An RNA of 177 nucleotides, treated with 2A3 and DMS and read out base by base. It was measured as part of the RMDB library RFMREP. High 2A3 reactivity points to a flexible backbone, as in loops and unpaired stretches.
[RMDB]
RNA sequence: GGGAACGACUCGAGUAGAGUCGAAAAUGAUCCGAAGGAAUGAAAGUCUCGUCUAAUCGUGAUAUUAAUCGAGAUCGGUGGGACUUUCGUUCGUUUGGAAGAAAACUUCCCGUGUUCGCACGGGAAGCCAAGUAAGGUGGUUCGCCACCUUACUUGGAAAAGAAACAACAACAACAAC
Reactivity to 2A3 in 0.01 (KOAc 150mM, MgCl2 10mM, bicine 150mM(pH8.5), 24C), signal-to-noise 3, nucleotides 027 to 126: u120g020a040u010c000c010g020a000a000g060g000a000a020u000g000a010a010a000g000u000c000u010c010g040u000c020u050a090a020u010c010g030u030g100a060u050a100u300u280a120a080u080c020g000a000g000a060u100c080g000g000u000g000g030g000a000c000u000u010u000c000g000u000u010c010g020u010u010u000g010g010a030a040g100a030a090a020a020c000u000u010c000c000c010g000u000g010u020u040c280g000c020a000c010g000g000g000a000a000g030
Reactivity to DMS in 0.01 (KOAc 150mM, MgCl2 10mM, bicine 150mM(pH8.5), 24C), signal-to-noise 3, nucleotides 027 to 126: u000g000a120u000c000c000g010a010a000g000g010a020a000u000g000a010a010a000g010u000c000u000c000g020u000c000u000a130a090u000c010g010u010g010a130u010a140u010u010a160a080u010c010g010a020g000a050u000c240g000g000u000g010g000g000a010c000u000u000u000c000g030u000u000c000g000u000u000u000g020g000a020a120g000a040a040a070a270c000u000u000c000c000c000g030u000g010u010u020c220g040c010a000c010g010g000g010a000a000g000